[RMDB]
RNA sequence: GGGAACGACUCGAGUAGAGUCGAAAAUUUAACCUGCUUACGAACUAUUAGUCUGAUCUAAUAAUACAUGCAGGUGGGAAAUUCGGUGAAACACAACAAAUGAGGUUUCAGUUAUUUGGGCUCGUGAAAUAACGCUGAAGUUCGCUUCAGCGUUAUUAAAAGAAACAACAACAACAAC
Reactivity to DMS in 0.01 (KOAc 150mM, MgCl2 10mM, bicine 150mM(pH8.5), 24C), signal-to-noise 6, nucleotides 027 to 126: u000u000u030a110a020c010c000u000g000c000u000u010a120c160g000a120a120c170u010a010u000u010a010g000u010c210u010g020a090u050c000u000a010a010u000a010a060u020a130c110a060u010g020c010a010g000g000u000g000g010g010a020a020a220u000u010c030g000g020u000g000a040a030a020c010a050c060a050a150c210a070a090a120u020g000a120g000g010u000u000u000c020a080g010u000u000a030u010u000u000g000g000g000c110u000c020g010u010g010a090
Reactivity to 2A3 in 0.01 (KOAc 150mM, MgCl2 10mM, bicine 150mM(pH8.5), 24C), signal-to-noise 6, nucleotides 027 to 126: u020u020u020a020a000c000c000u000g000c010u040u120a090c050g090a120a030c050u020a010u000u000a000g070u010c260u210g110a100u070c000u010a000a010u010a050a050u090a040c050a010u090g000c000a000g000g000u020g010g040g010a060a060a010u070u060c040g010g010u070g050a020a040a000c070a010c010a100a050c040a120a210a110u180g050a200g090g030u020u040u030c010a020g060u090u050a070u100u060u050g050g000g010c030u010c030g030u030g020a070

Source: RMDB libraries RFM100 and RFMREP, as collected in RNAgym.
Chemical mapping of a 177-nucleotide RNA with DMS and 2A3.
Values cover nucleotides 27 to 126.